[RMDB]
RNA sequence: GGGAACGACUCGAGUAGAGUCGAAAAGAUAUGGAUCCAUACCGAGCUAACCCUCGGAAACGAGGGCUAGCGUUUGACGUAUGGAGUCCUAAGUCAAAACCCGGCAGGUCUUCGGACCUGCCGGGAAUCAUGGUGAUAUGUUCGCAUAUCACCAUGAAAAAGAAACAACAACAACAAC
Reactivity to DMS in 0.01 (KOAc 150mM, MgCl2 10mM, bicine 150mM(pH8.5), 24C), signal-to-noise 2, nucleotides 027 to 126: g000a010u000a010u000g000g010a180u010c000c000a010u000a000c010c010g010a060g010c000u000a010a030c000c010c000u010c000g030g010a000a000a000c000g010a020g000g010g000c010u000a000g000c010g030u010u000u000g020a300c300g000u000a010u010g010g010a010g000u000c000c000u020a040a100g000u000c000a130a090a140a170c010c000c000g020g010c000a000g020g000u010c000u010u010c200g030g010a020c000c000u010g000c000c000g000g010g020a000a000
Reactivity to 2A3 in 0.01 (KOAc 150mM, MgCl2 10mM, bicine 150mM(pH8.5), 24C), signal-to-noise 1, nucleotides 027 to 126: g000a000u020a000u030g000g010a000u010c000c000a010u000a000c010c040g020a010g000c020u010a020a010c000c000c000u000c000g030g000a010a010a010c000g020a000g000g000g000c010u000a010g030c000g000u050u070u220g030a000c010g020u000a010u010g000g020a020g010u020c000c000u020a000a000g020u020c010a020a000a080a300c000c000c040g010g060c000a020g060g000u060c020u130u300c300g090g010a010c010c000u030g000c000c000g000g000g000a000a020
This 177-nucleotide RNA was probed chemically with DMS and 2A3. For DMS, 2,537 sequencing reads were counted. For 2A3 the reverse transcriptase was SuperScript II with manganese. Source: RMDB library TTRDEL, as collected in RNAgym.